Structure probing data (DMS and 2A3) for a 207-nucleotide construct. The DMS profile rests on 2,771 reads. DMS adducts were read by reverse transcription with MarathonRT. Reactivities are given for positions 27 through 156. Conditions: 150 mM KOAc, 10 mM MgCl2 and 150 mM bicine (pH 8.5), 24 C.
RNA sequence: GGGAACGACUCGAGUAGAGUCGAAAAAGUGCACUAGGUACGCCUAGUGCACAUUCCAGGACAUACUGCUGAGGAUGUCAAAAAUGCAGUUGGAGUCCUCAAUUGGAUAGGCUACGGCCUAUCCAGAAAAAGACUUGGUUGUUCGCAACCAAGUCAACGUAAACACAAGGUUCGCCUUGUGUUUACGAAAAGAAACAACAACAACAAC
Reactivity to DMS in 0.01 (KOAc 150mM, MgCl2 10mM, bicine 150mM(pH8.5), 24C), signal-to-noise 2, nucleotides 027 to 156: a040g000u000g010c000a030c000u000a000g010g010u000a120c300g040c070c000u020a000g000u000g030c000a000c000a010u000u000c010c030a210g000g020a130c090a040u000a040c020u010g030c090u010g000a090g050g020a100u000g010u000c100a040a060a120a120a170u020g020c080a140g040u000u010g010g010a180g000u000c000c000u000c060a070a140u010u000g020g020a030u000a000g030g020c010u000a160c300g070g010c000c010u000a010u000c000c010a030g020a020a050a030a200a150g010a010c000u010u000g000g040u000u000g000u000u000c220g000c000a010a050c000c010a000a010g010u000c000a020a040
Reactivity to 2A3 in 0.01 (KOAc 150mM, MgCl2 10mM, bicine 150mM(pH8.5), 24C), signal-to-noise 2, nucleotides 027 to 156: a000g020u000g000c000a000c000u000a000g030g000u070a030c230g100c040c000u030a010g010u000g010c000a000c000a000u000u000c000c010a030g020g030a010c000a010u150a040c010u030g050c030u070g030a070g150g110a260u290g300u300c220a050a040a010a000a020u170g000c000a000g000u010u030g080g120a080g030u010c010c000u050c060a020a130u130u050g010g000a000u000a000g000g030c020u020a060c290g040g000c010c010u010a000u000c010c000a010g010a000a020a010a010a000g000a000c000u010u000g000g000u000u000g040u040u080c180g010c040a010a000c000c000a000a000g000u000c000a000a000